[RMDB]
RNA sequence: GGGAACGACUCGAGUAGAGUCGAAAAGGGGUCUCUGCAACAGCGAUACGGAGGCAUCGAUCUACACUGAAGCCUCCACGGUGUAGGGAGCCUCCGCGUCGACAUGCAGAGACGGAGGCACCCAAAACUGCCGUGAAAGUUCGCUUUCACGGCAGAAGUUUCUAGCAUCGUUCGCGAUGCUAGAAACAAAAGAAACAACAACAACAAC
Reactivity to 2A3 in 0.01 (KOAc 150mM, MgCl2 10mM, bicine 150mM(pH8.5), 24C), signal-to-noise 2, nucleotides 027 to 156: g000g010g140g010u000c000u000c010u010g030c110a300a120c050a300g130c030g000a010u030a030c010g010g010a000g000g010c010a020u300c030g010a010u000c000u020a020c020a000c020u030g040a090a000g010c010c010u000c010c000a000c010g000g000u010g000u010a010g000g000g000a010g030c000c010u020c040c020g010c000g000u000c000g060a100c030a100u300g000c000a010g000a000g010a000c010g000g000a010g000g000c000a050c010c010c000a040a000a010a070c000u000g000c000c000g000u000g000a000a000a000g020u120u200c210g020c210u030u010u000c000a010c020g000g000c000a000g000a000a000